[RMDB]
RNA sequence: GGGAACGACUCGAGUAGAGUCGAAAAACACAGUGCAUGACAAGAACGAACAGGGGGAAGCGCAACCCAGGGGGGAGAUCAGAUUCAAAGGCAACGCGGUGUUUGCAGGCUACUUCAGAGACGCGGAGCCCAGUUACUUAUUCGUAAGUAACUGGGCAAAAGAAACAACAACAACAAC
Reactivity to 2A3 in 0.01 (KOAc 150mM, MgCl2 10mM, bicine 150mM(pH8.5), 24C), signal-to-noise 1, nucleotides 027 to 126: a000c070a000c020a030g060u040g020c040a020u080g030a060c010a050a060g060a150a020c090g020a050a000c030a060g000g030g000g040g020a060a010g010c010g000c050a020a040c010c010c010a020g010g010g000g000g010g000a060g000a010u010c010a010g040a110u070u070c050a070a060a030g030g020c000a020a010c020g000c020g070g020u040g010u040u010u020g020c000a020g000g040c010u060a040c010u090u060c040a020g020a010g000a050c020g030c020g080g000a000
Reactivity to DMS in 0.01 (KOAc 150mM, MgCl2 10mM, bicine 150mM(pH8.5), 24C), signal-to-noise 3, nucleotides 027 to 126: a080c060a080c110a050g020u010g030c060a080u000g000a080c060a060a090g000a070a090c080g010a060a040c100a070g000g000g010g000g000a080a070g000c090g000c050a060a070c050c010c010a110g000g020g000g000g000g000a080g010a050u000c070a030g000a110u010u010c100a040a060a140g000g010c040a030a090c100g010c050g000g010u010g000u000u000u000g010c070a070g010g000c100u010a040c060u000u010c070a060g000a090g000a080c060g010c100g010g010a180
Source information: Source: RMDB library OK2TST, as collected in RNAgym. Chemical mapping of a 177-nucleotide RNA with 2A3 and DMS. For 2A3, 1,868 sequencing reads were counted.